[RMDB]
RNA sequence: GGGAACGACUCGAGUAGAGUCGAAAAGAUAUGGAUCACCUUUUCAGUUCUAUUAUGGGAGAAGACUGUCGGAAACGACAGAACUUCAUCGAUCAUACGGUAGAACUGAAAAGGUGAUCCUAAGUCACAAUAGUGUGUUCUUCGGAACACACUAUUGAAAAGAAACAACAACAACAAC
Reactivity to DMS in 0.01 (KOAc 150mM, MgCl2 10mM, bicine 150mM(pH8.5), 24C), signal-to-noise 5, nucleotides 027 to 126: g010a030u000a300u000g020g020a000u000c010a010c000c000u000u010u000u000c000a020g010u000u000c010u000a010u000u000a030u000g010g000g010a070g020a020a030g010a300c020u010g010u010c010g010g000a120a130a250c000g020a020c010a000g010a060a090c010u000u000c000a260u000c210g000a080u030c030a020u030a030c300g010g000u010a000g000a020a010c000u000g000a000a000a000a000g020g020u000g000a000u000c000c000u000a000a050g020u000c050a230